Source: RMDB library OK2TRN, as collected in RNAgym. Chemical mapping of a 177-nucleotide RNA with 2A3 and DMS. The reactions ran in a buffer of 150 mM KOAc, 10 mM MgCl2 and 150 mM bicine (pH 8.5), at 24 C.

RNA sequence: GGGAACGACUCGAGUAGAGUCGAAAACACCACGUACGACUUUGGAUUUGCGGCCUUAGACAUCCUCACUGUCUAUGCUGAGGACAGCGGCGAGUACACGUGCCGAGUCACAAACAACCACGGUGAAGUACUCUAGACAUUUCGAUGUCUAGAGUACAAAAGAAACAACAACAACAAC
Reactivity to 2A3 in 0.01 (KOAc 150mM, MgCl2 10mM, bicine 150mM(pH8.5), 24C), signal-to-noise 6, nucleotides 027 to 126: c030a010c010c020a040c060g090u100a030c050g040a080c090u070u090u140g060g020a080u060u040u160g100c040g030g030c000c020u030u040a050g020a060c010a090u010c000c020u020c010a020c030u030g040u070c020u080a170u150g070c100u070g070a050g070g000a010c010a010g020c020g040g010c010g000a030g030u070a050c080a010c090g030u040g010c020c000g030a030g030u030c010a000c010a170a100a020c020a050a040c010c020a040c020g010g000u040g030a070a030
Reactivity to DMS in 0.01 (KOAc 150mM, MgCl2 10mM, bicine 150mM(pH8.5), 24C), signal-to-noise 5, nucleotides 027 to 126: c120a170c050c020a170c160g010u000a070c100g010a130c160u000u000u000g010g010a080u010u000u010g010c020g010g010c020c070u010u000a050g000a080c090a100u010c030c020u000c030a070c070u000g000u000c080u010a090u010g020c130u000g010a080g010g010a050c070a030g020c050g010g000c160g000a090g010u000a050c100a060c130g000u010g000c010c020g000a130g010u000c020a080c090a060a070a040c070a070a080c070c050a040c100g000g020u000g010a120a140
For 2A3 the reverse transcriptase was SuperScript II with manganese.